[RMDB]
RNA sequence: GGGAACGACUCGAGUAGAGUCGAAAAAAAAGCAUGGUAUUGCUACGCCCAACUGUUAUAAACCGGUAGUACUGAUCACUUUCCGUGGCUAGAAACACCACCAACACAUAUUACACACAUCUAACAUUACAUACAUGGACAAACACAACAGCAGAAAGCAUGAUACGCGUUUCGACGCGUAUCAUGCAAAAGAAACAACAACAACAAC
Reactivity to 2A3 in 0.01 (KOAc 150mM, MgCl2 10mM, bicine 150mM(pH8.5), 24C), signal-to-noise 2, nucleotides 027 to 156: a030a000a000a000g060c040a040u100g090g030u160a070u140u050g030c040u060a000c070g030c000c010c010a050a080c040u030g100u160u020a100u010a130a110a110c020c010g000g040u020a070g000u000a040c040u060g120a270u140c020a020c030u050u180u110c060c070g040u040g080g000c040u070a040g070a070a100a000c050a050c020c020a020c030c020a070a000c060a010c010a000u040a040u100u180a110c030a000c000a010c000a050u070c090u100a080a000c010a100u000u140a030c020a040u040a000c000a050u040g070g000a000c020a020a050a000c030a060c020a250a000c000a030g050c000a000g080a100a030a010
About this RNA:
Conditions: 150 mM KOAc, 10 mM MgCl2 and 150 mM bicine (pH 8.5), 24 C. The record gives the reactivity of an RNA of 207 nucleotides to 2A3. For 2A3 the reverse transcriptase was SuperScript II with manganese. The 2A3 profile rests on 582 reads.